RNA sequence: GGGAACGACUCGAGUAGAGUCGAAAACACUUCUGGCUGGCGACUGCCGGUACAGUACUGUACAUCUGUGCGAUGUGGGUCAACGGUAUCUUGCAGGGAUUGAUGUGGCGCGCAGUAAACGGUGACGCGAUCCGUGCAAGUUCGCUUGCACGGAUCGAAAAGAAACAACAACAACAAC
Reactivity to 2A3 in 0.01 (KOAc 150mM, MgCl2 10mM, bicine 150mM(pH8.5), 24C), signal-to-noise 1, nucleotides 027 to 126: c040a010c020u110u080c000u040g050g010c020u010g000g040c010g140a300c140u290g030c000c000g020g000u200a170c010a000g040u120a040c080u140g090u090a010c000a100u010c000u040g110u080g040c040g040a060u070g090u030g120g030g000u040c020a020a000c060g030g000u150a100u070c030u040u100g060c000a040g070g000g120a130u010u160g080a070u110g030u060g070g040c020g020c000g030c050a010g020u130a000a080a000c060g020g030u080g060a020c010g020
Reactivity to DMS in 0.01 (KOAc 150mM, MgCl2 10mM, bicine 150mM(pH8.5), 24C), signal-to-noise 1, nucleotides 027 to 126: c100a060c120u020u020c040u000g010g010c010u000g080g020c000g020a120c190u000g010c000c080g000g010u000a040c010a040g020u020a040c100u020g040u000a050c090a080u000c080u000g010u000g040c090g000a040u000g040u000g010g010g010u020c050a040a060c030g000g030u000a040u000c060u020u000g010c060a040g030g000g000a060u000u010g010a150u010g020u010g000g040c010g010c080g040c040a030g030u010a050a080a070c050g010g040u000g000a120c070g010
This 177-nucleotide RNA was probed chemically with 2A3 and DMS. It was measured as part of the RMDB library OK2TRN. The RNA was probed in 150 mM KOAc, 10 mM MgCl2 and 150 mM bicine (pH 8.5) at 24 C. Reactivities are given for positions 27 through 126. For DMS, 1,153 sequencing reads were counted. Reactivities are rounded to 0.1 and cut off at 0 and 3.